Conditions: 150 mM KOAc, 10 mM MgCl2 and 150 mM bicine (pH 8.5), 24 C. This 207-nucleotide RNA was probed chemically with 2A3. 2A3 adducts were read by reverse transcription with SuperScript II with manganese. Reactivities are given for positions 27 through 156.
RNA sequence: GGGAACGACUCGAGUAGAGUCGAAAAGGGGUCCUGGUGUUUGUUAAUUGUCAGUAAACUACACUCUGAAGCCUCCACGGAGUGUAGUUUACUUGGAUUUAUUAAUGAUACCAGGACGGAGGCACCCAAAAGAUCCGUUCGUUCGCGAACGGAUCAACCUCAGUUAUAGGUUCGCCUAUAACUGAGGAAAAGAAACAACAACAACAAC
Reactivity to 2A3 in 0.01 (KOAc 150mM, MgCl2 10mM, bicine 150mM(pH8.5), 24C), signal-to-noise 1, nucleotides 027 to 156: g030g000g000g000u000c000c010u000g000g010u020g020u000u200u100g040u020u020a030a060u060u040g030u060c020a010g000u000a000a000a000c000u010a000c000a000c000u010c000u030g060a130a030g070c020c050u020c020c030a030c050g000g000a000g000u020g000u000a000g010u000u000u000a000c010u000u070g010g010a000u100u210u150a040u010u050a030a010u010g010a010u000a000c000c010a000g000g000a000c010g000g010a000g000g030c020a050c000c000c000a010a200a000a040g010a000u000c000c000g000u000u000c000g010u020u120c300g020c010g160a000a000c000g000g010a000u000c000a000a010